[RMDB]
RNA sequence: GGGAACGACUCGAGUAGAGUCGAAAAGAACCGCGACCUGUGCCGCGACGGGUUUAAAUUCCAGGCCGAGCUGCUCGACAACGGCAAGUACGACGUCGAGAUCCUGCUGAAGCUGACCGAGCGCGUCCCAGACGCGUACAUUCGUGUACGCGUCUGGAAAAGAAACAACAACAACAAC
Reactivity to DMS in 0.01 (KOAc 150mM, MgCl2 10mM, bicine 150mM(pH8.5), 24C), signal-to-noise 3, nucleotides 027 to 126: g010a100a180c050c010g050c030g000a050c020c030u000g010u000g000c100c030g020c060g020a100c080g000g010g000u000u000u010a070a090a160u000u010c070c050a100g000g000c010c040g010a100g000c040u000g020c020u020c010g000a020c010a110a170c040g000g010c060a080a090g020u010a090c000g010a100c240g010u000c000g010a070g000a090u000c070c060u000g000c030u010g020a090a100g010c030u010g000a070c050c020g000a030g010c020g000c030g030u010c040
Reactivity to 2A3 in 0.01 (KOAc 150mM, MgCl2 10mM, bicine 150mM(pH8.5), 24C), signal-to-noise 2, nucleotides 027 to 126: g030a070a030c020c020g010c010g030a050c000c040u040g030u100g050c030c020g050c020g030a020c040g060g000g000u030u060u110a100a120a040u100u030c040c030a040g030g070c010c000g020a000g040c010u020g020c000u020c020g000a020c010a120a110c030g000g000c060a120a060g070u170a070c050g030a020c030g020u020c000g000a000g000a020u090c050c070u060g030c030u070g050a040a010g030c010u020g030a060c050c000g010a020g070c040g000c020g020u020c000